RNA sequence: GGGAACGACUCGAGUAGAGUCGAAAAUAUACAUCAGAAGUCGGCACAACUCCCGACUCGCGGUGAGCGAUGCAGCGUAGCCCGUGCUACGCAGCUGCUGUGCGGAUGGCUAGCAAAAGCUAGCCUACGACUAGGAUAGGUUCGCCUAUCCUAGUCGAAAAGAAACAACAACAACAAC
Reactivity to 2A3 in 0.01 (KOAc 150mM, MgCl2 10mM, bicine 150mM(pH8.5), 24C), signal-to-noise 7, nucleotides 027 to 126: u170a000u030a020c030a030u100c020a050g080a170a010g080u010c010g020g080c150a030c050a300a300c120u050c020c000c000g010a010c010u010c020g010c050g000g040u100g020a020g000c020g130a150u170g020c030a020g010c000g000u000a000g000c020c050c110g120u260g000c000u000a000c000g010c020a020g000c000u050g000c010u030g030u100g070c020g070g040a070u100g000g000c000u020a000g000c020a030a090a300a050g000c000u000a000g000c000c010u010a030
Reactivity to DMS in 0.01 (KOAc 150mM, MgCl2 10mM, bicine 150mM(pH8.5), 24C), signal-to-noise 6, nucleotides 027 to 126: u030a090u030a170c060a000u000c050a070g010a120a030g010u000c010g020g010c170a130c150a120a120c300u040c120c000c000g000a070c030u010c010g020c300g010g020u020g010a090g010c070g010a090u030g010c030a030g000c000g010u000a010g000c000c180c200g010u020g000c000u000a000c000g020c020a030g020c000u010g000c040u000g010u040g020c060g000g000a100u010g000g000c000u000a020g000c000a120a080a100a200g000c000u000a000g010c000c000u000a020
Conditions: 150 mM KOAc, 10 mM MgCl2 and 150 mM bicine (pH 8.5), 24 C. An RNA of 177 nucleotides, treated with 2A3 and DMS and read out base by base. The 2A3 profile rests on 7,458 reads. 2A3 adducts were read by reverse transcription with SuperScript II with manganese. Source: RMDB library OK1LIB, as collected in RNAgym.